[RMDB]
Notes
The record gives the reactivity of an RNA of 207 nucleotides to DMS and 2A3. The 2A3 profile rests on 837 reads. Values are in units of 0.01, from 0 to 300, in steps of 10. The reactions ran in a buffer of 150 mM KOAc, 10 mM MgCl2 and 150 mM bicine (pH 8.5), at 24 C.
RNA sequence: GGGAACGACUCGAGUAGAGUCGAAAAUUUUAGAUUGGAUCAUCCGUGAAGGCCUCUAUCUAGAAAGGAGACACUUGGGCAGAAUUCUGAAUGAACUUGACGGACAUCUGAAGGAAAAAUAUUCCAGUCAGAAGGAACAGUACGUGCAAAGUCCCCACUAGUGAGGUAAUUUCGAUUACCUCACUAGAAAAGAAACAACAACAACAAC
Reactivity to DMS in 0.01 (KOAc 150mM, MgCl2 10mM, bicine 150mM(pH8.5), 24C), signal-to-noise 2, nucleotides 027 to 156: u000u000u000u000a050g010a200u000u000g000g010a060u010c020a080u010c040c020g010u010g010a080a120g000g020c060c030u000c020u000a070u010c030u000a170g000a100a110a220g030g000a200g020a050c040a050c070u000u000g070g000g040c040a150g010a090a090u000u000c020u010g000a120a040u000g000a020a080c030u000u010g000a100c050g010g020a060c060a090u000c030u020g000a100a110g050g020a000a050a110a160a110u010a170u000u000c030c000a060g050u000c050a100g000a060a100g000g000a070a060c040a110g020u010a020c090g000u000g070c060a060a040a160g000u000c010c010c010c060a130
Reactivity to 2A3 in 0.01 (KOAc 150mM, MgCl2 10mM, bicine 150mM(pH8.5), 24C), signal-to-noise 2, nucleotides 027 to 156: u080u130u040u050a020g020a050u000u040g040g000a010u070c010a010u010c050c030g010u070g010a030a000g080g010c010c000u020c040u100a060u030c040u080a070g100a080a100a020g090g000a040g040a000c040a000c100u080u070g100g020g000c000a020g140a170a080u050u040c040u050g020a130a150u030g020a070a080c020u100u070g030a020c020g040g000a000c020a040u040c040u000g010a030a040g020g050a010a000a060a030a030u220a110u090u030c000c000a010g070u000c000a000g060a090a050g050g050a080a000c010a030g040u070a000c010g070u020g010c010a000a010a060g090u030c040c000c000c000a020

The DMS profile rests on 2,662 reads.